[RMDB]
Chemical mapping of a 207-nucleotide RNA with 2A3.
As a SHAPE reagent, 2A3 marks flexible, mostly unpaired nucleotides at the ribose 2'-OH.
Conditions: 150 mM KOAc, 10 mM MgCl2 and 150 mM bicine (pH 8.5), 24 C.
Reactivities are given for positions 27 through 156.

RNA sequence: GGGAACGACUCGAGUAGAGUCGAAAAACGCAUCAUACGUGAUGCGAGAACUACAGUUCCGCUCCUCUAGCACACAGAGGUCAAUUGGGUGCGUCCCCCCCCUCUCCCGUGGGUCAACGGGAACCAAAAAAGACCCUUUAGUUCGCUAAAGGGUCAAGCAACUAUCCUAGUUCGCUAGGAUAGUUGCAAAAGAAACAACAACAACAAC
Reactivity to 2A3 in 0.01 (KOAc 150mM, MgCl2 10mM, bicine 150mM(pH8.5), 24C), signal-to-noise 2, nucleotides 027 to 156: a000c000g000c020a000u000c010a000u050a160c180g080u070g060a060u150g000c030g020a120g000a010a030c130u270a080c080a120g000u020u010c020c010g050c030u040c000c010u020c040u040a030g020c080a020c010a020c010a060g020a000g080g030u030c010a030a060u110u050g040g000g000u000g010c010g050u070c000c000c010c000c000c040c000c000u030c020u000c020c010c000g000u010g000g010g010u150c010a010a000c000g000g000g000a000a000c000c010a000a000a000a040a110a000g010a000c000c000c000u030u000u000a010g010u020u100c180g000c160u010a000a000a010g000g000g000u010c000a000a000